[RMDB]
RNA sequence: GGGAACGACUCGAGUAGAGUCGAAAAGAUAUGGAUUCCUCGGGAGACUUAACAGUCGGAAACGACUGGGAGGUCGAGGAUCGAGGGAAUCCUAAGUCAAAGGAUUAUGUCUUCGGACAUAAUCCAAGUUACGUAUGCUCUUCGGAGCAUACGUAACAAAAGAAACAACAACAACAAC
Reactivity to DMS in 0.01 (KOAc 150mM, MgCl2 10mM, bicine 150mM(pH8.5), 24C), signal-to-noise 2, nucleotides 027 to 126: g000a050u010a210u010g020g000a010u000u000c000c000u000c000g000g000g000a050g030a030c010u000u000a100a120c030a010g020u020c000g010g010a060a060a120c020g030a010c010u000g010g010g000a050g010g000u000c000g010a060g010g000a010u020c000g010a060g000g000g000a000a000u000c000c000u000a060a090g000u000c050a110a090a150g000g000a020u000u000a010u000g000u000c000u010u020c230g050g020a000c000a000u000a010a000u000c000c000a010a020
Reactivity to 2A3 in 0.01 (KOAc 150mM, MgCl2 10mM, bicine 150mM(pH8.5), 24C), signal-to-noise 1, nucleotides 027 to 126: g000a010u060a040u110g000g000a010u020u000c000c000u020c000g000g000g000a040g000a010c000u050u060a060a060c000a020g000u000c000g000g000a020a030a030c010g000a000c010u010g000g000g050a070g060g010u000c000g000a040g010g000a010u000c000g010a040g100g090g040a000a060u000c000c000u010a080a010g070u040c040a130a080a130g010g000a010u000u010a000u000g000u010c010u050u120c300g110g000a010c010a010u000a000a000u010c010c010a000a000
Chemical mapping of a 177-nucleotide RNA with DMS and 2A3. Source: RMDB library TTRDEL, as collected in RNAgym. For 2A3, 3,332 sequencing reads were counted.